[RMDB]
RNA sequence: GGGAACGACUCGAGUAGAGUCGAAAAUGCGACACACACGGAGAGCAGUGGCUGGCUCGGCGUCUCGGCACGGGGAAGUGCACCGCUGGCUGCCGAGUUUGACGAGAUCUGCAUCAAUGACGGUCGGCUUAUAUGAAGCCUUCGGGCUUCAUAUAAGAAAAGAAACAACAACAACAAC
Reactivity to 2A3 in 0.01 (KOAc 150mM, MgCl2 10mM, bicine 150mM(pH8.5), 24C), signal-to-noise 2, nucleotides 027 to 126: u070g010c000g010a010c010a010c010a000c000a020c210g030g030a030g010a020g070c010a010g000u060g110g030c010u030g020g000c020u010c000g000g000c020g020u030c030u050c020g010g000c010a010c030g060g020g060g080a130a060g060u040g020c070a050c020c060g050c110u050g040g000c060u100g000c020c000g020a020g000u010u020u060g040a020c010g010a020g020a150u050c010u040g000c000a030u010c010a010a240u050g030a030c060g010g000u010c000g020g020
Reactivity to DMS in 0.01 (KOAc 150mM, MgCl2 10mM, bicine 150mM(pH8.5), 24C), signal-to-noise 3, nucleotides 027 to 126: u010g000c000g010a050c020a090c060a160c100a100c300g010g000a150g010a090g020c010a030g010u010g020g000c030u000g000g000c000u000c010g000g020c030g010u000c020u000c030g010g010c020a010c040g020g010g000g010a110a110g020u000g000c080a090c160c030g020c110u000g000g000c060u000g010c010c000g000a030g020u000u000u020g000a050c060g000a150g000a150u000c000u000g020c020a080u010c040a060a110u000g010a150c080g000g020u000c030g010g020